[RMDB]
RNA sequence: GGGAACGACUCGAGUAGAGUCGAAAAUUAUCAGGUCCUCUCUUUGAAGGUUCUGUGGUCAUCAUUUAGCCCAAUUCACUAUCCUGAAUGAACUAAAAUAGCCAUCAUUCAAACACAAGUAAAGGAAGUAAGAGAUCUAGUUCGCUAGAUCUCUUACAAAAGAAACAACAACAACAAC
Reactivity to DMS in 0.01 (KOAc 150mM, MgCl2 10mM, bicine 150mM(pH8.5), 24C), signal-to-noise 3, nucleotides 027 to 126: u010u000a070u000c070a050g020g000u000c010c000u000c070u000c100u000u000u000g030a080a090g000g010u010u000c070u010g020u000g010g010u000c110a050u010c090a070u010u010u000a100g000c030c000c020a100a130u000u010c070a070c150u010a160u000c080c070u000g000a020a030u000g010a060a110c050u010a040a050a080a130u000a110g000c030c050a080u000c040a050u010u000c030a040a070a080c140a050c180a040a040g000u000a040a090a080g000g020a060a100
Reactivity to 2A3 in 0.01 (KOAc 150mM, MgCl2 10mM, bicine 150mM(pH8.5), 24C), signal-to-noise 3, nucleotides 027 to 126: u120u050a060u120c010a010g010g000u030c000c020u030c020u000c070u070u080u160g120a130a020g000g000u090u060c030u040g050u050g040g040u070c030a060u000c010a020u120u080u080a040g000c000c000c000a050a050u100u060c030a040c080u090a070u110c000c020u040g010a030a020u010g020a070a070c010u100a100a010a200a300u170a040g000c050c020a050u010c000a030u050u050c040a070a070a010c040a020c040a100a040g070u120a220a020a070g090g040a100a050